RNA sequence: GGGAACGACUCGAGUAGAGUCGAAAAGGAACGCCACAUUAUCGAGCACGCUCAUAUUGGGAAACAGGGUGUAAUGCUGGAAUACCAUGCCAAUAUUGCGCCUGUGCGGCGGAACACGGGUAUAAUAGACUAAUCCACUGUUCGCAGUGGAUUAGUCAAAAGAAACAACAACAACAAC
Reactivity to 2A3 in 0.01 (KOAc 150mM, MgCl2 10mM, bicine 150mM(pH8.5), 24C), signal-to-noise 2, nucleotides 027 to 126: g060g020a110a030c050g000c000c000a020c020a070u060u110a040u120c160g000a000g020c020a030c080g040c010u000c010a030u080a030u120u120g060g040g120a000a140a110c030a020g030g010g090u030g010u050a020a040u040g000c010u010g010g030a000a020u080a220c050c040a050u210g080c000c000a000a000u060a010u020u030g010c000g010c000c000u050g020u020g010c060g050g000c010g030g010a030a020c060a030c010g030g010g110u140a130u050a170a190u190a080
Reactivity to DMS in 0.01 (KOAc 150mM, MgCl2 10mM, bicine 150mM(pH8.5), 24C), signal-to-noise 2, nucleotides 027 to 126: g000g010a100a150c100g020c030c030a120c060a040u020u000a060u010c140g010a020g030c030a150c300g050c010u000c030a070u010a080u000u000g000g010g020a070a100a130c050a070g020g010g000u010g000u000a010a020u000g010c060u010g000g000a120a080u010a140c210c190a080u010g020c000c060a030a030u010a020u000u010g000c020g050c000c000u000g000u000g010c160g020g020c060g000g000a040a090c100a040c100g020g000g020u000a040u000a060a050u000a150